Chemical mapping of a 177-nucleotide RNA with DMS and 2A3.
The RNA was probed in 150 mM KOAc, 10 mM MgCl2 and 150 mM bicine (pH 8.5) at 24 C.
For DMS, 25,059 sequencing reads were counted.
For 2A3, 29,051 sequencing reads were counted.

RNA sequence: GGGAACGACUCGAGUAGAGUCGAAAAGGAUCACCGGUUCAUCACGUCGUUUAUUCGGUUGAUAACGAAACACCGUCCUGCUCAGCGAUAACGUCCUGCAUGCCUGGCGUAUGCUCAUCGUAAACUGCGGUUAUAUUAAGUUCGCUUAAUAUAACCGAAAAGAAACAACAACAACAAC
Reactivity to DMS in 0.01 (KOAc 150mM, MgCl2 10mM, bicine 150mM(pH8.5), 24C), signal-to-noise 9, nucleotides 027 to 126: g010g010a060u000c060a110c060c030g010g000u000u000c070a060u000c060a080c140g010u000c050g010u000u010u000a090u010u000c030g010g000u010u000g010a070u010a060a090c070g010a070a060a090c120a080c060c030g010u000c020c020u000g000c050u000c050a070g000c040g000a070u010a060a080c100g000u000c030c030u000g010c050a050u000g010c040c020u000g000g010c080g010u000a040u000g010c020u000c070a060u000c080g010u010a040a070a100c100u000g000
Reactivity to 2A3 in 0.01 (KOAc 150mM, MgCl2 10mM, bicine 150mM(pH8.5), 24C), signal-to-noise 9, nucleotides 027 to 126: g050g010a050u050c030a020c050c030g010g020u060u040c040a070u040c020a030c060g100u050c030g010u070u050u090a160u110u090c030g030g030u050u100g070a070u050a110a050c040g040a080a040a010c050a010c020c020g020u030c000c000u010g020c020u020c040a020g020c010g030a020u040a120a050c030g050u030c020c010u040g010c010a030u070g010c000c020u040g100g000c030g010u030a040u070g010c020u030c040a120u070c050g060u070a040a090a080c050u090g040